This 207-nucleotide RNA was probed chemically with 2A3 and DMS. For 2A3, 9,515 sequencing reads were counted. It was measured as part of the RMDB library ARCHII.
RNA sequence: GGGAACGACUCGAGUAGAGUCGAAAAGACGGGCUAGGGUUCGCAAGAACCAGCGAGGUCAUUUACGUCAGAUAAGCCCCGUCGGUGUCACGACUGCGGGGACGAAAACCAAGUGACUCGCCGUCGUAGAGCGUGUUCGUCCGCGAUGCGGCGGUUACAUUUCCUAAUUGUUCGCAAUUAGGAAAUGAAAAGAAACAACAACAACAAC
Reactivity to 2A3 in 0.01 (KOAc 150mM, MgCl2 10mM, bicine 150mM(pH8.5), 24C), signal-to-noise 7, nucleotides 027 to 156: g020a010c020g020g030g030c050u100a090g090g010g080u010u020c010g020c080a050a080g010a010a010c010c010a000g030c030g080a060g010g070u040c020a030u080u120u130a040c030g010u020c030a020g030a200u090a070a050g010c000c000c000c000g080u120c090g010g010u040g040u050c030a020c040g050a000c010u010g010c000g010g020g000g030a050c020g020a000a040a010a020c070c090a120a040g010u000g010a020c010u010c080g010c010c000g000u000c000g000u010a010g010a010g020c020g000u120g060u180u120c130g150u170c030c000g000c000g010a010u020g010c000g000g000c000g010g000u000u010a000
Reactivity to DMS in 0.01 (KOAc 150mM, MgCl2 10mM, bicine 150mM(pH8.5), 24C), signal-to-noise 3, nucleotides 027 to 156: g010a040c020g030g000g010c050u000a110g040g020g000u000u000c000g030c270a140a180g000a050a040c020c010a120g000c050g010a130g010g020u000c020a050u000u010u010a080c020g000u000c030a100g000a130u000a080a140g010c000c000c000c010g040u020c020g010g000u000g020u000c240a150c210g000a070c010u000g020c020g010g010g010g020a110c030g000a000a050a070a060c040c030a080a140g010u000g000a080c020u000c060g020c000c000g020u000c010g000u000a030g000a220g020c010g020u000g000u000u000c130g020u000c060c020g020c010g000a150u000g010c010g000g010c000g010g000u000u000a070
For DMS, 9,271 sequencing reads were counted.